This 177-nucleotide RNA was probed chemically with 2A3 and DMS. Source: RMDB library M2PK50, as collected in RNAgym. High 2A3 reactivity points to a flexible backbone, as in loops and unpaired stretches. For 2A3 the reverse transcriptase was SuperScript II with manganese. For 2A3, 2,068 sequencing reads were counted.
RNA sequence: GGGAACGACUCGAGUAGAGUCGAAAAUUGAACGGAUUCGUCCGUUCAACGCGUGCGAUCCAAACGUAGUACAAAAGUACAGACGAAAGCACAAGGAUGAAAUGAUACAGCCGUUCGCGGCUGUAAAGUAAACAUUCUCGUUCGCGAGAAUGUUUACAAAAGAAACAACAACAACAAC
Reactivity to 2A3 in 0.01 (KOAc 150mM, MgCl2 10mM, bicine 150mM(pH8.5), 24C), signal-to-noise 2, nucleotides 027 to 126: u000u000g000a000a000c000g000g010a020u040u070c100g060u000c040c000g000u020u010c010a000a010c020g060c010g010u020g000c020g060a030u020c050c000a000a060a030c050g060u020a010g030u040a030c020a020a300a060a070g030u010a010c010a030g070a040c010g040a060a020a020g020c020a020c020a030a050g100g030a080u210g080a050a100a060u160g040a040u030a060c000a010g000c000c000g040u050u130c240g000c030g090g000c000u010g010u010a000a000a000
Reactivity to DMS in 0.01 (KOAc 150mM, MgCl2 10mM, bicine 150mM(pH8.5), 24C), signal-to-noise 2, nucleotides 027 to 126: u000u000g000a010a010c000g000g000a020u000u000c200g020u000c000c000g010u000u000c000a010a000c160g010c280g020u020g010c010g000a160u010c020c050a080a120a280c070g040u010a060g000u000a020c030a070a090a080a080g000u000a000c050a070g000a090c060g000a050a120a130g000c020a040c010a100a200g000g010a110u020g010a070a130a080u010g000a250u010a020c000a000g010c000c000g020u020u000c200g010c010g040g000c020u000g030u000a000a020a140